Source information: This 177-nucleotide RNA was probed chemically with DMS. The reactions ran in a buffer of 150 mM KOAc, 10 mM MgCl2 and 150 mM bicine (pH 8.5), at 24 C.
RNA sequence: GGGAACGACUCGAGUAGAGUCGAAAAGAUAUGGAUCGUCUAUAGCGAACAAAUCGUGAACUACGCUUGAUUGAUCGGAAACGAUCAUACAGCGCACGAUUUGUUCGCUAUAGAGCGAUCCUAAGUCGAUUGCAUAAUGCUUCGGCAUUAUGCAAUCAAAAGAAACAACAACAACAAC
Reactivity to DMS in 0.01 (KOAc 150mM, MgCl2 10mM, bicine 150mM(pH8.5), 24C), signal-to-noise 2, nucleotides 027 to 126: g020a130u010a300u000g040g010a030u010c020g010u000c030u010a000u000a000g010c010g000a030a000c000a000a000a000u000c000g030u010g010a090a100c260u040a300c060g000c000u010u000g000a300u010u010g010a000u000c000g000g000a190a120a180c010g020a010u000c000a000u000a190c220a030g030c000g000c010a000c010g000a000u000u000u000g000u000u000c020g000c000u000a000u000a000g000a050g030c000g000a010u000c000c000u010a010a190g020u010c130
It was measured as part of the RMDB library TTRINS. DMS adducts were read by reverse transcription with MarathonRT.